[RMDB]
RNA sequence: GGGAACGACUCGAGUAGAGUCGAAAAAUUGGCAGAAUCCUGAAAUCACUCACGUGGUUACGGCUUCUGAUAUCGCCAACUAUGUGAGAGCUUAUUUCCAAGCUCGAUCCACAAUUGAGCGCGUAAACUUCUAGUCCUCCUUCGGGAGGACUAGAAGAAAAGAAACAACAACAACAAC
Reactivity to DMS in 0.01 (KOAc 150mM, MgCl2 10mM, bicine 150mM(pH8.5), 24C), signal-to-noise 1, nucleotides 027 to 126: a130u000u000g000g030c030a030g010a070a040u000c000c070u010g020a170a060a020u000c000a010c000u000c300a130c300g030u000g010g030u000u000a180c250g000g020c080u000u000c000u000g000a070u010a020u030c090g020c000c000a000a030c120u000a050u000g000u000g000a270g000a030g020c030u000u000a130u000u000u020c000c150a050a000g000c000u000c000g000a050u000c200c060a010c120a020a050u000u000g000a100g000c070g000c300g000u000a090a090a120